[RMDB]
RNA sequence: GGGAACGACUCGAGUAGAGUCGAAAAUUCGAAUACCGACUUUUAUCGCAGGAUUUAUGAUGGCUAAAGUCGAUGUGAAAUGCCCGUUUUGCGCGCAAACGGCAUCCGUUAAAAAGUAUGGUCCGGGUAGGAAAAUUACGUUCGCGUAAUUUUCCUAAAAAGAAACAACAACAACAAC
Reactivity to 2A3 in 0.01 (KOAc 150mM, MgCl2 10mM, bicine 150mM(pH8.5), 24C), signal-to-noise 3, nucleotides 027 to 126: u050u030c010g030a070a030u070a140c040c000g030a010c010u020u040u050u060a100u150c010g030c070a070g070g170a110u030u120u250a090u200g100a060u170g090g030c020u040a060a040a000g020u030c010g070a040u090g080u020g170a060a100a070u100g000c000c000c060g020u040u030u040u090g070c070g000c000g020c040a040a020a000c010g040g000c010a010u020c010c010g000u000u030a120a060a000a010a000g160u140a160u170g040g000u010c040c020g040g000g020
Reactivity to DMS in 0.01 (KOAc 150mM, MgCl2 10mM, bicine 150mM(pH8.5), 24C), signal-to-noise 3, nucleotides 027 to 126: u000u010c040g010a150a100u050a030c080c010g010a040c010u000u010u020u030a040u010c100g000c020a070g030g010a180u010u020u060a070u050g000a120u080g020g030c000u020a080a060a010g010u000c000g000a070u000g060u000g010a050a080a040u010g010c080c000c070g010u010u010u000u010g010c020g000c090g030c070a100a030a040c020g020g000c020a000u020c030c020g010u030u040a020a040a070a080a070g010u020a040u010g000g000u000c050c040g020g000g030